[RMDB]
RNA sequence: GGGAACGACUCGAGUAGAGUCGAAAAGAUAUGGAGAUAACUUCGAUAAGUUCCGGUCGGAAACGACCGAAGAACUUUUGACGAAGGAAGCUCCUAAGUCAAAGUUUGAACGUUCGCGUUCAAACAACCAUAAACUAUAGUUCGCUAUAGUUUAUGGAAAAGAAACAACAACAACAAC
Reactivity to DMS in 0.01 (KOAc 150mM, MgCl2 10mM, bicine 150mM(pH8.5), 24C), signal-to-noise 4, nucleotides 027 to 126: g010a040u000a280u010g000g000a030g010a010u000a170a270c010u000u000c000g000a150u010a010a020g010u000u000c000c000g010g000u000c000g010g000a100a070a160c010g010a010c000c010g010a040a060g000a010a010c000u000u000u000u010g000a180c080g000a020a000g010g000a120a190g000c000u000c000c000u000a030a090g000u010c040a100a080a190g000u000u000u000g000a000a000c000g020u000u010c280g020c000g020u010u000c000a000a000a010c010a080a160
Reactivity to 2A3 in 0.01 (KOAc 150mM, MgCl2 10mM, bicine 150mM(pH8.5), 24C), signal-to-noise 4, nucleotides 027 to 126: g020a020u070a030u180g010g000a010g000a010u080a270a090c000u020u000c020g060a090u050a200a030g000u010u000c010c000g000g020u000c010g000g030a080a040a090c000g000a000c010c020g030a050a070g000a000a010c000u060u050u100u250g200a080c010g000a000a000g020g000a040a080g010c000u010c000c000u010a100a010g010u000c050a240a040a070g000u020u030u010g010a010a010c000g000u090u090c300g030c000g120u010u030c000a000a000a010c000a000a010

Chemical mapping of a 177-nucleotide RNA with DMS and 2A3. The DMS profile rests on 4,175 reads. Conditions: 150 mM KOAc, 10 mM MgCl2 and 150 mM bicine (pH 8.5), 24 C. For 2A3 the reverse transcriptase was SuperScript II with manganese. The 2A3 profile rests on 7,630 reads. Source: RMDB library TTRDEL, as collected in RNAgym. High 2A3 reactivity points to a flexible backbone, as in loops and unpaired stretches.